[RMDB]
Structure probing data (2A3 and DMS) for a 177-nucleotide construct.

RNA sequence: GGGAACGACUCGAGUAGAGUCGAAAAAAUACGAGACGUCUGCACCGCACAUGUCUCAGGAAGAGAUCGUCCGUAGUAGCAAGCUGCUGGAGGGUAUCUCGGUCAGCAUCUCGAUUGGCAAGACGUCUCUACCCCUGAAUUUCGAUUCAGGGGUAGAAAAAGAAACAACAACAACAAC
Reactivity to 2A3 in 0.01 (KOAc 150mM, MgCl2 10mM, bicine 150mM(pH8.5), 24C), signal-to-noise 8, nucleotides 027 to 126: a000a010u230a010c060g000a010g000a030c000g010u020c010u010g010c010a040c060c020g070c030a020c010a070u060g100u050c020u030c090a010g100g030a050a070g010a010g000a010u030c020g050u000c090c020g030u040a010g000u020a020g100c100a180a030g020c010u020g000c050u120g040g050a050g040g060g030u080a040u010c010u000c000g010g030u140c020a010g010c010a050u010c020u010c040g200a210u060u150g070g000c020a080a030g020a000c000g010u000c000
Reactivity to DMS in 0.01 (KOAc 150mM, MgCl2 10mM, bicine 150mM(pH8.5), 24C), signal-to-noise 7, nucleotides 027 to 126: a050a050u050a070c120g000a020g000a010c000g000u000c000u010g010c040a130c080c010g010c240a060c130a050u010g010u020c030u010c130a100g020g000a130a080g000a020g000a020u000c030g000u010c000c000g020u010a020g010u010a080g020c230a130a150g010c010u000g000c000u030g030g010a030g000g020g020u030a020u000c010u010c010g000g000u020c070a030g010c020a030u000c110u010c030g020a100u020u010g000g020c020a060a030g010a020c020g000u000c010
Overview
2A3 is a SHAPE reagent: it acylates the 2'-hydroxyl of flexible nucleotides of all four kinds. For 2A3 the reverse transcriptase was SuperScript II with manganese.